The record gives the reactivity of an RNA of 177 nucleotides to DMS and 2A3.
For 2A3, 5,165 sequencing reads were counted.
It was measured as part of the RMDB library TTRDEL.
The reactions ran in a buffer of 150 mM KOAc, 10 mM MgCl2 and 150 mM bicine (pH 8.5), at 24 C.
Reactivities are given for positions 27 through 126.
DMS adducts were read by reverse transcription with MarathonRT.
High DMS reactivity at an A or C suggests that its Watson-Crick edge is free.

[RMDB]
RNA sequence: GGGAACGACUCGAGUAGAGUCGAAAAGAUAUGGAAAGCUAUGAAGCAGGGCAUGAUGACCUCGGAAACGAGCAAGUGCUCUGUGGAGCUUUCCUAAGUCAAAGGCUAGGCCUUCGGGCCUAGCCAAUCUAACCCUAAAGUUCGCUUUAGGGUUAGAAAAAGAAACAACAACAACAAC
Reactivity to DMS in 0.01 (KOAc 150mM, MgCl2 10mM, bicine 150mM(pH8.5), 24C), signal-to-noise 4, nucleotides 027 to 126: g010a040u010a300u000g000g000a020a010a010g010c010u010a160u020g010a130a240g000c010a010g000g000g020c000a000u000g000a120u010g000a090c300c000u000c010g000g010a080a090a180c010g010a010g020c040a060a170g010u000g000c010u000c000u000g010u000g000g000a020g020c000u000u000u000c000c000u010a000a060g010u000c040a090a140a100g010g010c000u010a000g000g010c000c000u000u010c210g020g010g010c000c010u010a010g010c000c000a000a010
Reactivity to 2A3 in 0.01 (KOAc 150mM, MgCl2 10mM, bicine 150mM(pH8.5), 24C), signal-to-noise 3, nucleotides 027 to 126: g020a010u070a050u130g000g010a020a010a000g000c020u040a080u300g020a010a000g000c010a010g000g040g000c010a010u030g060a180u130g040a250c020c030u010c010g040g020a090a060a040c010g000a000g000c010a200a180g010u010g000c010u000c020u000g000u020g000g010a000g000c000u000u000u000c000c000u000a060a010g020u000c030a180a070a030g030g000c010u010a000g010g000c000c030u020u130c300g040g010g030c030c000u000a000g020c000c000a000a000